[RMDB]
RNA sequence: GGGAACGACUCGAGUAGAGUCGAAAACUACUAGUAAUAGUAUCCAACACAUACGGUACCGAUUACGUCCAAAACUUAAACCUUUUACAAUGCUAAAAAUUAUUAUCCCAACAACAAUACUACUACCCAUAACAUGAAUAUCUAAACACAACAUAAUCCAUUAAGCUCUGUUCGCAGAGCUUAAUGGAAAAGAAACAACAACAACAAC
Reactivity to 2A3 in 0.01 (KOAc 150mM, MgCl2 10mM, bicine 150mM(pH8.5), 24C), signal-to-noise 2, nucleotides 027 to 156: c010u110a020c010u050a020g040u060a010a060u010a030g000u010a050u000c020c020a090a010c100a010c000a090u120a070c080g010g010u020a010c030c030g030a060u050u050a040c020g040u060c000c000a000a150a070a070c020u020u080a010a180a160c000c000u050u100u010u020a060c070a060a050u110g000c010u100a080a080a120a060a020u030u140a040u090u070a050u170c000c020c000a040a020c020a010a010c000a040a080u060a080c000u020a010c010u010a000c000c000c000a000u000a060a030c010a020u070g040a080a030u120a060u160c050u100a050a020a100c110a020c020a170a040c020a040u240a270a020u120